RNA sequence: GGGAACGACUCGAGUAGAGUCGAAAAGAUAUGGAGGAUCUAGCGCACCAACAGCCAGGAGUAUAAACCGAUCGGAAACGAUCGGUUUAUACUCCUGGACAUGGUGGCUACAUGAUCCUCCUAAGUCGAACAAGUAGAACUUCGGUUCUACUUGUUCAAAAGAAACAACAACAACAAC
Reactivity to DMS in 0.01 (KOAc 150mM, MgCl2 10mM, bicine 150mM(pH8.5), 24C), signal-to-noise 1, nucleotides 027 to 126: g000a120u010a290u020g000g000a020g010g010a000u000c000u000a050g000c070g070c010a010c000c010a050a090c300a260g020c020c000a020g000g010a040g040u010a010u000a000a000a020c000c000g040a030u000c000g050g010a050a140a210c010g010a010u000c000g000g010u000u000u010a010u000a010c010u000c000c000u000g000g000a000c040a050u000g010g030u000g000g030c000u000a020c300a090u000g010a010u000c010c000u000c000c000u000a010a040g000u000c100